[RMDB]
RNA sequence: GGGAACGACUCGAGUAGAGUCGAAAAUGAUGCAACAAUGAAAGCCUUCAACGACGAAUACGAUUGGUUGAAUGCAAAUGGUGAUUUUGCCAUAGCAGGAAAUUUUGAUGAUCGCAUACCAGGAGCUUGUAAGGACAUUCAUGAAUUUGAAAAGCGCGGCCAAUCAUAGUUUCGACUAUGAUUGGCCAAAAGAAACAACAACAACAAC
Reactivity to 2A3 in 0.01 (KOAc 150mM, MgCl2 10mM, bicine 150mM(pH8.5), 24C), signal-to-noise 1, nucleotides 027 to 156: u130g000a040u100g000c040a060a050c040a090a080u110g100a070a040a020g000c000c000u010u010c030a050a000c010g060a010c040g040a050a010u070a020c020g050a060u030u030g000g050u010u000g000a030a050u010g000c040a030a030a030u010g020g030u070g200a300u160u100u000u300g020c010c000a000u000a060g030c030a000g000g110a030a020a020u130u270u150u120g140a130u070g010a020u010c030g000c120a020u050a080c000c080a000g000g000a030g080c000u030u030g060u160a010a010g080g010a100c000a070u000u000c020a020u030g090a090a040u150u090u090g040a120a140a010a000g090c070g000c010
This 207-nucleotide RNA was probed chemically with 2A3. It was measured as part of the RMDB library OK3TST.